Structure probing data (DMS) for a 207-nucleotide construct. Source: RMDB library RSTRND, as collected in RNAgym. For DMS the reverse transcriptase was MarathonRT. Reactivities are given for positions 27 through 156. For DMS, 1,504 sequencing reads were counted. Conditions: 150 mM KOAc, 10 mM MgCl2 and 150 mM bicine (pH 8.5), 24 C.

RNA sequence: GGGAACGACUCGAGUAGAGUCGAAAAUGAAGAUAGUUCCGAAUCAUACUUGGCGAGUCUAACUACGCCAUGGCUGCUUUAUUUAGCGUAACGCUAGAUUAGCCUCGUCCCGAUAAGAUCGGGAGAGCCAUCGUCGCUCAGUUGCUCUGAUCUGCCGCAAGUUUGAUCAGUUCGCUGAUCAAACUUGAAAAGAAACAACAACAACAAC
Reactivity to DMS in 0.01 (KOAc 150mM, MgCl2 10mM, bicine 150mM(pH8.5), 24C), signal-to-noise 1, nucleotides 027 to 156: u010g000a160a090g000a100u000a080g010u010u000c060c020g000a090a170u010c060a130u000a110c020u010u000g020g010c030g010a110g000u000c020u000a070a150c000u000a020c010g040c030c030a010u040g020g030c000u010g050c030u010u000u000a040u030u010u000a070g000c010g020u000a060a120c180g000c000u000a020g000a050u000u010a100g020c050c030u000c120g010u000c020c000c000g030a060u010a070a160g020a300u000c000g190g010g090a020g010a000g010c000c020a020u000c050g010u000c060g000c020u000c050a180g000u000u010g000c060u000c090u010g000a160u000c000u000g020c040c070g000